[RMDB]
RNA sequence: GGGAACGACUCGAGUAGAGUCGAAAAGGGGGUACACUCGAGGAGUGGAAGGCGGGUAGGGGGGACCCCAGGGUCAACCUACGGAAAUCCCUGAGUUCCUCGGAUGUCCAGGCCGUCCCCUCUUCUAAACCUCUAAUCUUCGGAUUAGAGAAAAGAAACAACAACAACAAC
Reactivity to DMS in 0.01 (KOAc 150mM, MgCl2 10mM, bicine 150mM(pH8.5), 24C), signal-to-noise 9, nucleotides 027 to 129: g020g010g020g010g040u030a080c040a040c040u010c020g030a110g000g010a030g030u000g050g040a130a060g030g010c170g020g050g020u030a070g020g010g000g010g020g020a000c020c020c020c040a080g030g020g000u010c070a080a080c030c030u020a100c170g020g030a070a030a090u050c030c010c030u020g000a200g000u010u000c000c030u000c050g030g030a120u010g020u070c000c030a090g040g010c010c020g030u050c010c000c010c020u000c000u000u000c030u000a040a130a090c070
Reactivity to 2A3 in 0.01 (KOAc 150mM, MgCl2 10mM, bicine 150mM(pH8.5), 24C), signal-to-noise 9, nucleotides 027 to 129: g030g000g000g000g000u090a010c020a020c020u030c040g100a070g080g000a010g020u070g020g090a060a030g020g030c060g010g030g030u050a040g010g010g000g000g020g020a010c020c000c020c030a040g050g010g000u040c030a050a070c020c020u100a050c110g030g040a070a120a060u110c010c000c000u020g010a020g030u020u000c000c000u000c000g030g050a050u070g050u030c010c010a040g120g040c010c000g030u040c010c000c000c000u000c010u020u000c010u030a070a070a040c010

Source information: An RNA of 170 nucleotides, treated with DMS and 2A3 and read out base by base. The RNA was probed in 150 mM KOAc, 10 mM MgCl2 and 150 mM bicine (pH 8.5) at 24 C. The 2A3 profile rests on 40,353 reads. For 2A3 the reverse transcriptase was SuperScript II with manganese.